RNA sequence: GGGAACGACUCGAGUAGAGUCGAAAAAGCCGAAGUACGCGCGCAGGUUCGCGAGGCGCUGCCAGGCGUCGCCCGGCAUCUUGGCCGCGAGCGAGCCCUUGCCGUGCACGACUUCGUCGUGCGACAAACCAUAGUCCACUUUCGAGUGGACUAUGGUAAAAGAAACAACAACAACAAC
Reactivity to 2A3 in 0.01 (KOAc 150mM, MgCl2 10mM, bicine 150mM(pH8.5), 24C), signal-to-noise 1, nucleotides 027 to 126: a030g010c020c000g010a030a010g060u120a050c040g000c010g000c010g000c070a030g030g060u040u040c030g020c000g040a060g170g000c050g050c010u020g000c020c020a040g040g000c040g030u010c030g080c040c050c070g000g010c000a060u050c030u150u160g130g000c030c060g030c040g030a030g020c010g010a010g000c040c000c030u050u160g000c060c020g050u090g000c030a030c150g100a010c020u170u170c240g070u020c010g090u020g020c060g020a050c040a040a220
Reactivity to DMS in 0.01 (KOAc 150mM, MgCl2 10mM, bicine 150mM(pH8.5), 24C), signal-to-noise 2, nucleotides 027 to 126: a110g010c020c000g000a080a050g010u010a060c100g010c070g000c030g010c060a130g000g000u010u000c030g000c040g020a140g020g020c030g000c080u020g000c060c090a050g010g010c170g050u010c090g020c100c050c130g010g020c050a070u000c070u010u000g000g020c020c040g000c110g010a220g030c000g000a030g010c000c010c110u010u000g030c030c090g000u000g000c030a090c090g010a060c010u000u000c270g000u000c020g050u020g010c020g000a070c120a070a100
This 177-nucleotide RNA was probed chemically with 2A3 and DMS. The DMS profile rests on 1,732 reads. It was measured as part of the RMDB library OK2TST. The RNA was probed in 150 mM KOAc, 10 mM MgCl2 and 150 mM bicine (pH 8.5) at 24 C.